[RMDB]
RNA sequence: GGGAACGACUCGAGUAGAGUCGAAAAAUGGCAACCAUCAGGGGCCAGAUUAACACGAAAUGAGGAGGAUUCCGGAAGUUAACGCACAAAAGGAGGAUCAGGGCGCAGAUUUUCCGCCAGGAAGCGCCGAAUAUUCCCACUUCGGUGGGAAUAUUCGAAAAGAAACAACAACAACAAC
Reactivity to 2A3 in 0.01 (KOAc 150mM, MgCl2 10mM, bicine 150mM(pH8.5), 24C), signal-to-noise 6, nucleotides 027 to 126: a000u060g010g000c020a050a120c010c010a090u140c120a120g010g000g030g010c000c020a000g030a080u110u110a110a030c040a000c090g090a040a050a080u150g010a090g060g010a020g040g020a040u100u030c010c010g010g020a030a000g020u080u110a080a040c060g000c060a030c050a080a100a020a040g040g020a010g010g010a020u060c030a040g060g030g000c020g000c010a000g010a050u100u030u050u010c000c020g020c030c010a010g010g040a090a010g010c010g000c010
Reactivity to DMS in 0.01 (KOAc 150mM, MgCl2 10mM, bicine 150mM(pH8.5), 24C), signal-to-noise 7, nucleotides 027 to 126: a090u010g010g010c040a060a070c020c030a170u040c180a070g010g000g000g000c030c020a040g000a120u030u020a100a080c110a060c090g000a070a080a070u020g010a100g000g010a080g000g000a130u000u000c020c010g000g000a070a080g020u010u020a050a060c090g010c060a060c090a050a060a080a100g000g010a060g000g010a050u020c040a080g000g000g010c020g000c020a080g000a110u020u010u020u010c020c020g000c080c080a080g000g010a070a060g010c040g000c060

Chemical mapping of a 177-nucleotide RNA with 2A3 and DMS. 2A3 adducts were read by reverse transcription with SuperScript II with manganese. Reactivities are given for positions 27 through 126. As a SHAPE reagent, 2A3 marks flexible, mostly unpaired nucleotides at the ribose 2'-OH. In probing experiments dimethyl sulfate is read out at A N1 and C N3, which are open when not base-paired.